RNA sequence: GGGAACGACUCGAGUAGAGUCGAAAAGAUAUGGACCGAACGCGUUGUCAGACCUCAUCUUCGGAAACGAAGAUGGGUCUUGGAUUUACUAAGCGGUCCUAAGUCAAAAGCACUGUUCGCAGUGCAACCUCUCACAAUAGUUCGCUAUUGUGAGAGGAAAAGAAACAACAACAACAAC
Reactivity to 2A3 in 0.01 (KOAc 150mM, MgCl2 10mM, bicine 150mM(pH8.5), 24C), signal-to-noise 5, nucleotides 027 to 126: g040a020u090a060u160g000g000a000c000c020g030a220a070c080g000c060g100u020u040g030u050c010a010g000a020c010c060u300c110a020u000c010u010u000c010g050g010a130a060a050c020g000a010a000g000a000u000g010g000g000u000c000u000u060g000g000a000u130u210u060a040c020u050a090a080g030c010g020g000u000c000c000u000a110a020g060u040c040a020a050a130a050g000c000a000c000u010g050u150u180c300g010c150a000g000u000g000c000a010a040
Reactivity to DMS in 0.01 (KOAc 150mM, MgCl2 10mM, bicine 150mM(pH8.5), 24C), signal-to-noise 4, nucleotides 027 to 126: g000a050u000a300u000g000g000a020c000c000g010a040a090c120g040c280g010u010u000g000u000c000a010g000a020c010c010u010c010a000u000c000u000u010c000g000g020a090a100a210c000g010a000a010g000a000u000g020g000g010u000c000u010u010g010g020a030u000u010u000a020c010u010a170a100g000c010g000g000u010c000c000u010a010a090g000u000c040a070a070a110a100g000c000a010c000u000g000u010u010c190g010c010a010g010u000g020c000a030a060
Source information: This 177-nucleotide RNA was probed chemically with 2A3 and DMS. For DMS, 4,408 sequencing reads were counted.